Chemical mapping of a 177-nucleotide RNA with DMS and 2A3. Source: RMDB library M2PK50, as collected in RNAgym. For 2A3, 1,947 sequencing reads were counted.
RNA sequence: GGGAACGACUCGAGUAGAGUCGAAAACUCAGGGGCUUCGGCCCCUGAGAAACCCGAUGAAGCGGCACUUAGACAGCUUCAUACACCUUAGAAAGUGCAUAAAAACGGUAGACUUCGGUCUACCGAAUCAUAUCCUAGAGUUCGCUCUAGGAUAUGAAAAAGAAACAACAACAACAAC
Reactivity to DMS in 0.01 (KOAc 150mM, MgCl2 10mM, bicine 150mM(pH8.5), 24C), signal-to-noise 1, nucleotides 027 to 126: c010u000c000a000g030g010g020g010c010u000u000c170g040g000c050c000c010c000u000g000a000g000a010a120a140c000c000c010g010a070u010g000a030a000g030c010g040g000c040a060c100u010u000a060g000a070c120a190g000c000u000u010c010a030u000a200c120a070c110c110u000u000a080g000a070a110a060g000u000g020c050a090u030a130a030a120a090a110c010g010g000u000a000g000a000c000u000u030c190g040g010u000c000u010a000c000c010g010a010a030
Reactivity to 2A3 in 0.01 (KOAc 150mM, MgCl2 10mM, bicine 150mM(pH8.5), 24C), signal-to-noise 1, nucleotides 027 to 126: c000u000c000a000g000g020g010g060c030u060u070c140g100g000c020c010c000c010u000g010a020g000a030a000a000c000c000c000g000a040u030g000a000a000g000c050g050g060c050a000c060u050u040a040g080a060c020a030g000c000u000u000c000a000u020a010c030a020c010c010u050u050a020g110a070a100a010g010u010g010c020a050u160a050a100a010a020a030c000g000g000u000a000g010a010c020u040u030c260g050g000u000c000u000a010c000c000g000a000a000